Overview: This 170-nucleotide RNA was probed chemically with 2A3 and DMS. It was measured as part of the RMDB library 15KLIB.
[RMDB]
RNA sequence: GGGAACGACUCGAGUAGAGUCGAAAAAUCGAUCCACUUUCCGAGUUGCUCUUCUCUCCCCCUCCGGGGUCUCCUCGAAUCGGGCUGGCUCAUCCUCGAUUGCGAGCGGCGGUCCUGAGAACUCUUAUGACGCGCUCGUUCGCGAGCGCGAAAAGAAACAACAACAACAAC
Reactivity to 2A3 in 0.01 (KOAc 150mM, MgCl2 10mM, bicine 150mM(pH8.5), 24C), signal-to-noise 2, nucleotides 027 to 129: a020u060c000g010a060u020c060c000a050c050u060u020u070c000c010g000a000g000u000u080g070c040u000c000u140u010c010u000c010u020c000c010c000c000c000u020c020c000g000g010g020g020u000c000u020c000c000u070c020g010a000a010u000c000g000g000g020c040u080g030g020c000u030c000a010u020c010c000u000c000g070a060u110u100g080c010g000a030g000c090g090g030c050g000g020u000c000c000u010g030a000g040a090a020c020u000c020u170u090a080u090g000a010
Reactivity to DMS in 0.01 (KOAc 150mM, MgCl2 10mM, bicine 150mM(pH8.5), 24C), signal-to-noise 2, nucleotides 027 to 129: a100u010c090g000a090u030c100c070a110c060u000u040u010c000c000g010a090g000u010u040g010c060u020c060u050u020c060u000c030u000c050c110c090c000c000u010c030c070g080g070g020g030u010c100u030c040c020u020c040g020a070a060u050c050g000g030g070c200u030g050g090c020u020c030a060u000c000c100u000c050g050a000u000u030g030c020g020a040g030c000g030g010c080g010g040u030c000c060u040g010a080g010a000a000c160u090c020u020u000a030u000g030a010

Overview: The reactions ran in a buffer of 150 mM KOAc, 10 mM MgCl2 and 150 mM bicine (pH 8.5), at 24 C. The 2A3 profile rests on 2,858 reads.